[RMDB]
RNA sequence: GGGAACGACUCGAGUAGAGUCGAAAAGAUAUGGACCAGUAAGUCGCGAUAAGAUCGUCGGAAACGACAGAUCUUUUGACGCGAGAUGUGGUCCUAAGUCAAAGUGACCGCCUUCGGGCGGUCACAACUAGUACCUAUUGUUCGCAAUAGGUACUAGAAAAGAAACAACAACAACAAC
Reactivity to 2A3 in 0.01 (KOAc 150mM, MgCl2 10mM, bicine 150mM(pH8.5), 24C), signal-to-noise 4, nucleotides 027 to 126: g010a010u040a020u110g000g000a000c000c000a010g160u220a120a110g200u030c010g000c020g050a070u020a120a000g010a010u010c000g000u000c000g020g010a060a020a010c020g000a000c130a120g000a010u000c000u030u020u030u110g170a070c060g000c030g000a010g010a100u220g080u050g150g000u000c000c000u020a090a000g050u010c020a150a050a060g010u010g000a000c030c010g030c010c040u050u090c290g090g020g000c000g000g000u010c000a000c000a010a010
Reactivity to DMS in 0.01 (KOAc 150mM, MgCl2 10mM, bicine 150mM(pH8.5), 24C), signal-to-noise 6, nucleotides 027 to 126: g010a030u000a240u000g000g000a010c000c000a060g010u010a120a160g000u010c000g010c000g020a150u000a010a010g000a000u000c000g010u000c000g010g000a070a040a130c000g010a000c000a090g020a000u000c000u000u010u010u000g010a110c050g020c000g000a020g010a090u010g020u000g010g000u000c000c000u000a010a070g000u000c020a090a100a130g010u000g000a010c000c000g020c000c000u000u010c230g020g010g020c000g000g000u000c000a000c010a010a100